[RMDB]
This 177-nucleotide RNA was probed chemically with DMS and 2A3.
As a SHAPE reagent, 2A3 marks flexible, mostly unpaired nucleotides at the ribose 2'-OH.
The DMS profile rests on 13,076 reads.
The reactions ran in a buffer of 150 mM KOAc, 10 mM MgCl2 and 150 mM bicine (pH 8.5), at 24 C.

RNA sequence: GGGAACGACUCGAGUAGAGUCGAAAAGGCGGGAAACCUCGCGACAUCGAUGAUGAAGAUCCUGCGGCCAGGCAGGUUGACGGGGGAGUUGCCGCCCGGUGCCGUCAGGAUCGGCCGGGCGAACGACCACGUCCGCCAGUUUCGACUGGCGGACGUGAAAAGAAACAACAACAACAAC
Reactivity to DMS in 0.01 (KOAc 150mM, MgCl2 10mM, bicine 150mM(pH8.5), 24C), signal-to-noise 5, nucleotides 027 to 126: g020g000c020g010g010g010a110a060a140c060c000u000c070g010c040g000a130c080a070u010c030g010a130u030g000a070u020g020a150a080g010a040u010c010c010u010g020c030g010g000c020c060a140g000g040c040a060g010g020u000u000g010a060c080g000g000g000g030g000a160g010u000u000g010c100c000g000c010c010c010g000g020u050g010c010c010g010u030c110a100g020g000a060u030c040g000g000c020c010g000g000g020c020g000a090a080c080g010a120c130
Reactivity to 2A3 in 0.01 (KOAc 150mM, MgCl2 10mM, bicine 150mM(pH8.5), 24C), signal-to-noise 2, nucleotides 027 to 126: g050g010c040g010g000g040a030a160a160c010c010u020c030g020c010g070a090c010a070u050c060g260a170u170g010a040u090g050a100a050g020a040u030c020c010u010g010c020g020g020c020c030a050g010g050c040a060g040g000u090u130g020a030c020g020g070g000g010g010a140g050u030u030g030c020c000g000c000c000c010g070g050u160g100c030c000g080u120c070a090g000g060a080u050c010g010g000c010c000g020g000g000c030g000a050a030c020g010a020c030